An RNA of 207 nucleotides, treated with 2A3 and read out base by base. It was measured as part of the RMDB library VIROID. Conditions: 150 mM KOAc, 10 mM MgCl2 and 150 mM bicine (pH 8.5), 24 C.

RNA sequence: GGGAACGACUCGAGUAGAGUCGAAAAGAGGGCCGCGGUGCUCUGGAGUAGAGGCUCUGCCUUCGAAACACCAUCGAUCGUCCCUUCUUCUUUACCUUCUUCUGGCUCUUCUUGGAGACGCGACCGGUGGCACCUCUGCUCGGUUCGCUCCAACCUGCAUCCCUGGAUGGUUCGCCAUCCAGGGAUGAAAAGAAACAACAACAACAAC
Reactivity to 2A3 in 0.01 (KOAc 150mM, MgCl2 10mM, bicine 150mM(pH8.5), 24C), signal-to-noise 1, nucleotides 027 to 156: g000a000g020g000g000c000c000g110c020g110g000u000g000c000u000c000u010g000g000a000g020u000a000g000a010g000g000c060u050c180u300g020c060c040u170u220c010g010a000a000a000c000a020c130c000a000u030c000g140a300u020c000g040u040c000c000c000u050u030c000u010u000c010u010u030u040a030c000c010u030u080c050u020u030c020u070g110g010c120u020c030u250u010c040u070u130g040g020a050g000a110c050g020c080g090a050c080c000g060g000u070g000g050c090a080c030c090u030c020u070g000c060u060c020g000g050u050u000c000g000c000u000c000c010a020a030c040c030u120g000